[RMDB]
RNA sequence: GGGAACGACUCGAGUAGAGUCGAAAAGACCAAUGCUAGUCGCAUGUCCUGUAGCAGGAGGAGCCACGGACAAAACCCCUCAGACACUGGGUUAAGGAAGGAUUUGGCUUUUUCGGCCGGGAGCUUCCACGGUCAAUGAAUUCGUUCAUUGACCGUGAAAAGAAACAACAACAACAAC
Reactivity to 2A3 in 0.01 (KOAc 150mM, MgCl2 10mM, bicine 150mM(pH8.5), 24C), signal-to-noise 2, nucleotides 027 to 126: g060a000c000c000a050a030u060g000c030u080a060g160u210c070g000c040a010u090g030u050c000c010u050g030u090a020g000c020a010g000g030a010g020g000a000g040c010c000a030c020g000g010a010c000a010a110a030a030c010c010c020c010u100c080a140g050a130c060a040c210u050g000g000g000u040u050a040a020g090g030a030a030g030g030a040u140u080u210g000g000c000u040u050u030u000u050c000g010g030c000c000g000g000g000a020g020c010u090u010c060
Reactivity to DMS in 0.01 (KOAc 150mM, MgCl2 10mM, bicine 150mM(pH8.5), 24C), signal-to-noise 3, nucleotides 027 to 126: g000a230c030c020a110a030u010g000c020u000a100g030u030c190g000c060a070u000g010u000c010c010u000g010u010a120g010c040a060g010g030a070g010g000a060g000c010c030a040c090g000g000a220c060a040a090a110a080c070c000c010c130u010c080a120g020a100c170a100c170u000g010g010g000u000u010a060a170g010g000a130a070g010g000a140u010u020u010g010g010c000u010u000u010u000u000c080g000g010c000c030g000g000g000a060g020c070u000u000c030

This 177-nucleotide RNA was probed chemically with 2A3 and DMS.
Conditions: 150 mM KOAc, 10 mM MgCl2 and 150 mM bicine (pH 8.5), 24 C.
For 2A3 the reverse transcriptase was SuperScript II with manganese.
The DMS profile rests on 2,320 reads.
Reactivities are given for positions 27 through 126.
DMS (dimethyl sulfate) methylates the pairing face of unpaired adenines and cytosines.
DMS adducts were read by reverse transcription with MarathonRT.